[RMDB]
RNA sequence: GGGAACGACUCGAGUAGAGUCGAAAAAGAAUCUAGUGCAAAUAUUGUCUUAAUUACUUAGGCUAAAAGAAAUAAGUAUUAAAGCGGGACAAGGCAUCGACAUUUGAUACAAAUAUUGAUCAAUGGAACAAGAAACACUACUUCGGUAGUGUUUCAAGUUGUGAUAGCUGUUCGCAGCUAUCACAACAAAAGAAACAACAACAACAAC
Reactivity to 2A3 in 0.01 (KOAc 150mM, MgCl2 10mM, bicine 150mM(pH8.5), 24C), signal-to-noise 2, nucleotides 027 to 156: a000g010a020a020u030c070u190a050g000u010g060c070a060a130a100u160a230u120u030g020u000c000u040u170a170a240u060u000a060c000u020u010a030g070g000c070u090a190a000a100a060g010a020a130a010u070a030a010g050u000a020u060u150a140a060a000g110c130g060g000g010a000c000a000a040g020g000c000a000u020c050g020a000c000a050u150u110u100g010a020u110a040c070a010a160a000u260a180u140u140g060a050u040c020a040a000u010g090g000a050a040c110a110a110g010a000a000a000c000a000c000u040a000c000u010u020c130g110g000u000a000g040u000g010u000u000u000c000a000a000